An RNA of 207 nucleotides, treated with DMS and 2A3 and read out base by base.
The RNA was probed in 150 mM KOAc, 10 mM MgCl2 and 150 mM bicine (pH 8.5) at 24 C.
Reactivities are given for positions 27 through 156.
For DMS the reverse transcriptase was MarathonRT.
Source: RMDB library M2RFPK, as collected in RNAgym.
RNA sequence: GGGAACGACUCGAGUAGAGUCGAAAAUCCUUUCUCUAUAGAGAUUGGAGUCAUACAACCCCAGAAACCAUUCCUUAUACCUUGAGUAUUGCUGAAUUCAGUUUAGCGUGCAUGCUCUUGGCUAUUCAUACCAAGGACAACUUCGGUUGUCCUUGAACCUUUAGUUACUGUUCGCAGUAACUAAAGGAAAAGAAACAACAACAACAAC
Reactivity to DMS in 0.01 (KOAc 150mM, MgCl2 10mM, bicine 150mM(pH8.5), 24C), signal-to-noise 3, nucleotides 027 to 156: u000c000c010u010u000u010c000u010c010u000a240u000a210g020a020g000a030u000u000g010g020a060g010u010c110a180u010a150c040a110a110c020c000c010c030a200g010a120a130a110c090c040a220u000u000c010c020u000u000a180u000a020c010c020u010u000g020a040g010u000a000u000u010g030c010u010g010a070a080u000u010c110a150g000u000u000u010a030g020c090g000u020g040c120a170u000g000c010u000c020u000u000g050g000c030u010a100u000u000c070a100u010a150c140c020a010a030g020g010a020c000a000a040c010u000u000c280g060g000u000u010g030u000c000c000u010u000g000a030a100
Reactivity to 2A3 in 0.01 (KOAc 150mM, MgCl2 10mM, bicine 150mM(pH8.5), 24C), signal-to-noise 7, nucleotides 027 to 156: u000c000c000u000u000u000c070u000c010u040a300u150a240g010a000g000a000u000u010g010g010a020g060u080c060a060u120a180c070a060a140c030c010c020c030a030g150a070a130a050c080c040a120u160u180c030c020u140u090a040u040a130c000c000u010u020g000a000g000u030a040u150u100g030c000u030g050a150a130u160u150c060a150g140u050u050u110a060g040c040g030u060g030c020a010u020g000c000u000c000u010u000g000g040c010u060a050u080u130c060a060u070a220c060c000a000a000g010g000a000c000a000a000c000u040u100c130g060g000u000u000g010u010c000c000u000u000g000a000a000